[RMDB]
RNA sequence: GGGAACGACUCGAGUAGAGUCGAAAAUCAGCCUUGGACACCCUGCACUCUGCGCACGCACGCAACAAACAGAGAAGAGUCCAGUCCGGAGGGCAGAAAGCGCAGGAGGGCCUCCCCGCGCCGGCAGACGCCGUACUACAUUCGUGUAGUACGGCGUAAAAGAAACAACAACAACAAC
Reactivity to 2A3 in 0.01 (KOAc 150mM, MgCl2 10mM, bicine 150mM(pH8.5), 24C), signal-to-noise 3, nucleotides 027 to 126: u020c000a000g010c000c000u100u160g030g040a050c020a080c020c020c000u010g080c040a060c020u060c020u050g020c050g000c030a040c030g050c020a020c070g060c000a030a040c060a050a220a000c050a020g070a000g070a180a050g030a010g020u010c010c030a000g020u040c020c020g080g000a080g040g020g020c020a000g080a030a040a020g060c010g000c000a040g010g010a050g020g010g010c000c010u000c000c000c000c000g050c020g030c020c000g040g010c000a020g000
Reactivity to DMS in 0.01 (KOAc 150mM, MgCl2 10mM, bicine 150mM(pH8.5), 24C), signal-to-noise 2, nucleotides 027 to 126: u050c120a120g010c030c040u000u000g000g000a090c050a100c020c000c000u010g040c100a100c030u000c120u010g000c050g000c080a070c030g020c150a030c110g000c050a110a060c130a030a110a090c170a070g030a080g010a060a090g020a070g000u000c030c010a050g020u000c040c020g000g000a160g000g000g030c030a060g000a070a080a060g000c100g000c060a050g000g000a100g020g010g000c010c030u020c040c030c020c020g000c030g000c050c000g000g020c150a110g020

This 177-nucleotide RNA was probed chemically with 2A3 and DMS. It was measured as part of the RMDB library RFM100. For 2A3 the reverse transcriptase was SuperScript II with manganese. The reactions ran in a buffer of 150 mM KOAc, 10 mM MgCl2 and 150 mM bicine (pH 8.5), at 24 C. Values cover nucleotides 27 to 126. For 2A3, 1,787 sequencing reads were counted.